The record gives the reactivity of an RNA of 177 nucleotides to 2A3 and DMS. The data come from the RNA Mapping Database (RMDB), library TTRDES.

RNA sequence: GGGAACGACUCGAGUAGAGUCGAAAAGAUAUGGAGCAUGGGUAUCAGCUUGGAUUUAUGGUCGGAAACGACCAUUGUCAGCUGUGGCCCACUGCUCCUAAGUCAAAGGACGGUGUUCGCACCGUCCCGCCGAUAAUAUGUUCGCAUAUUAUCGGCGAAAAGAAACAACAACAACAAC
Reactivity to 2A3 in 0.01 (KOAc 150mM, MgCl2 10mM, bicine 150mM(pH8.5), 24C), signal-to-noise 6, nucleotides 027 to 126: g040a020u090a040u220g000g000a010g000c010a010u020g000g050g000u070a080u230c010a010g040c030u180u300g210g020a080u300u300u160a020u060g010g000u010c020g020g030a070a070a100c010g020a010c010c000a000u000u010g000u000c000a000g000c010u020g000u120g210g020c010c000c000a000c000u000g000c000u010c000c000u010a040a020g030u000c040a120a050a100g000g010a000c000g030g010u020g040u070u160c300g000c180a000c000c000g000u000c000c000
Reactivity to DMS in 0.01 (KOAc 150mM, MgCl2 10mM, bicine 150mM(pH8.5), 24C), signal-to-noise 5, nucleotides 027 to 126: g000a070u000a300u010g000g010a020g030c000a080u000g010g010g020u010a210u010c000a010g000c010u000u010g030g000a010u000u020u010a000u000g000g010u000c000g020g000a110a140a200c030g020a020c000c000a000u000u010g010u000c010a030g000c000u000g010u000g030g010c000c000c010a010c260u000g000c000u000c000c000u000a000a080g030u010c050a110a160a170g000g000a020c000g020g010u000g020u010u000c220g010c020a020c000c000g000u000c000c000
Annotation
The reactions ran in a buffer of 150 mM KOAc, 10 mM MgCl2 and 150 mM bicine (pH 8.5), at 24 C. 2A3 adducts were read by reverse transcription with SuperScript II with manganese.